[RMDB]
This 177-nucleotide RNA was probed chemically with DMS and 2A3. The RNA was probed in 150 mM KOAc, 10 mM MgCl2 and 150 mM bicine (pH 8.5) at 24 C. For 2A3 the reverse transcriptase was SuperScript II with manganese. For DMS the reverse transcriptase was MarathonRT. Reactivities are given for positions 27 through 126. For 2A3, 953 sequencing reads were counted.
RNA sequence: GGGAACGACUCGAGUAGAGUCGAAAAGCGAUCACACCGCAGACGUUGAUCAACAUCCGGCCGGUGGUCGCCGCGAUCAAGGAGUUCUUCGGCACCAGCCAGCUGAGCCAAUUCAUGGACCAGAACACUAUGAGACUUUCUUCGGAAAGUCUCAUAGAAAAGAAACAACAACAACAAC
Reactivity to DMS in 0.01 (KOAc 150mM, MgCl2 10mM, bicine 150mM(pH8.5), 24C), signal-to-noise 2, nucleotides 027 to 126: g000c050g020a020u000c030a040c060a130c030c040g000c150a100g000a060c080g020u010u000g010a120u000c110a050a130c070a100u020c050c010g000g020c110c110g010g010u010g000g020u010c010g000c000c030g010c300g000a080u000c050a070a070g000g000a100g030u000u000c020u000u000c060g010g010c010a050c080c070a080g000c060c050a050g000c060u000g010a130g000c020c010a070a160u000u000c080a110u010g030g000a110c000c040a070g010a100a040c160a120
Reactivity to 2A3 in 0.01 (KOAc 150mM, MgCl2 10mM, bicine 150mM(pH8.5), 24C), signal-to-noise 1, nucleotides 027 to 126: g000c010g010a020u000c020a010c030a040c100c000g130c130a080g010a080c050g060u110u040g160a220u240c140a010a020c010a040u050c040c000g010g010c040c170g110g000u020g030g000u020c030g000c010c020g060c030g000a060u060c040a060a090g140g000a080g110u090u030c060u010u080c040g040g010c060a030c000c020a010g100c000c000a000g000c000u080g030a010g000c040c020a040a040u090u110c030a080u120g030g040a090c000c020a020g030a050a010c020a000